[RMDB]
RNA sequence: GGGAACGACUCGAGUAGAGUCGAAAACUGCAAUGCGUGAUCUUCUUGGUGUUUCAAUUGUUCGUACACCAACAUAUGAAGCAACACCUCCUUUCGCUGCAACAGAAGAUUUGAUUUCAAAACGAGACAGCGACUAAAUAUUCGUAUUUAGUCGCUGAAAAGAAACAACAACAACAAC
Reactivity to 2A3 in 0.01 (KOAc 150mM, MgCl2 10mM, bicine 150mM(pH8.5), 24C), signal-to-noise 1, nucleotides 027 to 126: c010u050g060c050a060a080u090g000c020g080u070g060a050u030c010u110u000c020u080u110g020g000u010g020u080u040u040c050a110a120u100u090g050u100u110c070g050u050a040c050a030c060c010a030a020c010a020u120a030u110g020a050a000g000c020a030a020c010a030c050c010u020c030c010u050u090u070c080g000c030u070g000c000a080a070c000a100g080a100a000g010a070u060u050u110g060a100u010u070u130c080a080a040a030a030c050g000a010g040a050
Reactivity to DMS in 0.01 (KOAc 150mM, MgCl2 10mM, bicine 150mM(pH8.5), 24C), signal-to-noise 4, nucleotides 027 to 126: c060u000g020c110a090a040u000g010c050g020u010g010a070u010c020u000u010c030u010u000g020g040u000g000u010u010u000c040a010a300u000u000g010u000u010c150g010u000a080c150a070c080c050a020a050c120a060u020a090u000g000a040a030g000c090a060a050c060a080c050c040u000c040c030u000u000u000c050g030c020u010g000c070a070a070c100a070g000a060a050g000a050u020u000u000g010a140u000u000u010c070a030a080a080a090c090g000a140g020a190

Source: RMDB library OK2TST, as collected in RNAgym. This 177-nucleotide RNA was probed chemically with 2A3 and DMS. DMS adducts were read by reverse transcription with MarathonRT. The DMS profile rests on 3,207 reads. As a SHAPE reagent, 2A3 marks flexible, mostly unpaired nucleotides at the ribose 2'-OH. The RNA was probed in 150 mM KOAc, 10 mM MgCl2 and 150 mM bicine (pH 8.5) at 24 C. Reactivities are given for positions 27 through 126.